About this RNA
The record gives the reactivity of an RNA of 177 nucleotides to DMS and 2A3. For DMS the reverse transcriptase was MarathonRT. For 2A3, 1,063 sequencing reads were counted.
[RMDB]
RNA sequence: GGGAACGACUCGAGUAGAGUCGAAAAAUGUUCUCAUUGUAUUUGUUGAGAUCAUGUUUAACCUUCAACAAAUCGUAACAAGUGGGCUUUUCUUCUUCUUGGUCUUGGUUCAUCCGUAUACCGCCUAGCCCUGGUCAGUAUUCGUACUGACCAGGGCAAAAGAAACAACAACAACAAC
Reactivity to DMS in 0.01 (KOAc 150mM, MgCl2 10mM, bicine 150mM(pH8.5), 24C), signal-to-noise 1, nucleotides 027 to 126: a070u000g030u000u000c000u000c010a160u000u000g020u000a060u000u000u010g000u000u000g020a030g010a050u020c160a080u010g020u000u000u000a200a040c110c020u000u000c000a010a000c050a020a020a030u000c050g000u020a120a060c160a070a080g010u000g000g000g020c020u010u000u000u000c040u000u000c080u000u000c020u000u000g010g000u000c040u020u000g000g000u010u000c040a090u000c010c040g020u000a060u000a080c140c100g000c050c060u000a150
Reactivity to 2A3 in 0.01 (KOAc 150mM, MgCl2 10mM, bicine 150mM(pH8.5), 24C), signal-to-noise 1, nucleotides 027 to 126: a000u130g030u060u020c020u000c030a040u040u210g100u090a100u000u070u030g020u000u020g020a020g010a100u120c090a030u080g090u050u050u050a080a120c010c040u070u060c000a000a000c000a000a000a000u010c030g050u100a060a090c020a160a100g040u070g020g000g040c030u020u050u040u000c030u010u030c010u010u000c000u040u020g000g060u040c000u010u090g020g000u080u040c000a050u060c070c010g000u020a020u020a070c030c030g000c040c030u040a060
For 2A3 the reverse transcriptase was SuperScript II with manganese. The DMS profile rests on 1,088 reads. Conditions: 150 mM KOAc, 10 mM MgCl2 and 150 mM bicine (pH 8.5), 24 C. It was measured as part of the RMDB library OK2TST.